[RMDB]
RNA sequence: GGGAACGACUCGAGUAGAGUCGAAAAGAUGCAGUUCGCUGCAUCCAACUGGGGUCCUCGUUGAAAGAUCCACAGGCAUCGAUCCUGAAGCCUCCACGGGGGAGCCUGGGAUCUGGAGAGGACGGAGGCACCCUACGGGCGCCACUUCGGUGGCGAAAUACUGAGAUAGGUUCGCCUAUCUCAGUAUAAAAGAAACAACAACAACAAC
Reactivity to DMS in 0.01 (KOAc 150mM, MgCl2 10mM, bicine 150mM(pH8.5), 24C), signal-to-noise 2, nucleotides 027 to 156: g000a010u000g010c000a030g050u010u000c260g030c020u010g020c000a030u030c010c010a080a100c090u000g020g090g030g010u000c010c010u010c020g040u000u020g000a270a230a030g000a020u000c000c010a150c030a030g010g020c010a210u010c110g000a070u010c010c010u000g020a090a140g020c000c010u000c010c050a290c120g010g000g000g010g020a040g040c010c000u000g010g010g010a040u000c000u010g000g010a100g010a040g010g020a030c020g000g000a050g020g040c040a090c010c000c000u000a110c080g000g000g020c040g000c000c000a010c030u000u010c160g040g040u000g020g010c010g020a070a090
Reactivity to 2A3 in 0.01 (KOAc 150mM, MgCl2 10mM, bicine 150mM(pH8.5), 24C), signal-to-noise 3, nucleotides 027 to 156: g020a000u010g010c000a000g010u080u150c200g110c180u000g020c000a000u010c020c000a070a080c110u100g000g000g070g010u020c000c010u010c010g020u100u030g020a050a010a010g000a010u030c000c010a250c010a300g020g000c010a140u300c100g070a090u110c000c000u050g060a150a070g050c020c020u060c050c040a040c000g000g000g000g020g020a010g000c000c000u000g020g000g000a000u000c000u000g000g010a050g000a000g020g030a000c010g000g010a000g010g000c060a050c010c010c000u060a070c110g130g040g050c010g010c000c010a000c000u060u030c180g080g010u000g000g000c010g000a030a030